Chemical mapping of a 177-nucleotide RNA with DMS and 2A3. The reactions ran in a buffer of 150 mM KOAc, 10 mM MgCl2 and 150 mM bicine (pH 8.5), at 24 C. The data come from the RNA Mapping Database (RMDB), libraries RFM100 and RFMREP.
RNA sequence: GGGAACGACUCGAGUAGAGUCGAAAACUGCUGGAGGAGUCAUACAAACUUCGCCAUUUCUUCCUCUGAUGUCCAUGUGCCAUGAUUGUCUGAGGAAGGGAGAAAAAGUCUUUGAAGUGGCUACCAGCUUAUCUUGCAUUUUCGAAUGCAAGAUAAGAAAAGAAACAACAACAACAAC
Reactivity to DMS in 0.01 (KOAc 150mM, MgCl2 10mM, bicine 150mM(pH8.5), 24C), signal-to-noise 9, nucleotides 027 to 126: c020u000g000c010u010g000g010a110g020g010a020g010u000c010a020u000a130c040a040a070a040c010u000u000c060g010c300c160a170u000u000u000c000u010u000c000c000u000c000u010g000a020u000g000u000c090c080a050u010g010u020g010c170c070a060u000g010a070u010u010g030u000c000u000g000a020g000g000a010a000g000g000g000a010g000a080a190a060a020a020g000u010c150u010u000u000g010a130a130g030u000g000g000c010u000a100c000c000a020g000
Reactivity to 2A3 in 0.01 (KOAc 150mM, MgCl2 10mM, bicine 150mM(pH8.5), 24C), signal-to-noise 9, nucleotides 027 to 126: c010u030g010c010u010g000g040a100g150g070a010g030u010c010a010u030a080c020a010a030a010c010u020u010c040g070c110c030a110u020u010u010c000u000u000c000c000u000c020u040g010a010u020g040u050c090c030a070u110g110u190g230c080c040a040u060g020a050u100u280g040u010c010u020g000a000g010g000a000a000g010g010g000a030g040a010a040a010a000a000g030u030c150u050u060u050g090a220a080g030u010g010g000c000u010a030c000c000a000g000